Description
This 177-nucleotide RNA was probed chemically with DMS. The data come from the RNA Mapping Database (RMDB), library OK2TRN. Values cover nucleotides 27 to 126.

RNA sequence: GGGAACGACUCGAGUAGAGUCGAAAAAGGGCGCAGGCGGCCCGGUUCCCGCCGCUCCACGCGGGACUAAGCCUCUCGCGAAAGCGGCCGAGGAAGGGGCCAGCGAGGCCGCUGAACCGCCGUCGCGUAGCAAAGCAGGAUUCGUCCUGCUUUGCUAAAAAGAAACAACAACAACAAC
Reactivity to DMS in 0.01 (KOAc 150mM, MgCl2 10mM, bicine 150mM(pH8.5), 24C), signal-to-noise 1, nucleotides 027 to 126: a080g010g000g030c020g060c090a150g040g010c020g000g020c000c030c030g030g000u000u020c000c020c020g000c020c030g020c000u000c110c150a280c030g000c020g000g000g020a000c020u010a170a180g000c290c300u000c030u000c000g000c000g010a100a120a050g010c010g020g000c090c110g010a060g020g000a140a160g040g000g000g030c000c000a090g030c100g000a130g020g050c030c030g060c000u000g000a140a140c300c020g000c000c020g000u010c040g000c110g020
The RNA was probed in 150 mM KOAc, 10 mM MgCl2 and 150 mM bicine (pH 8.5) at 24 C.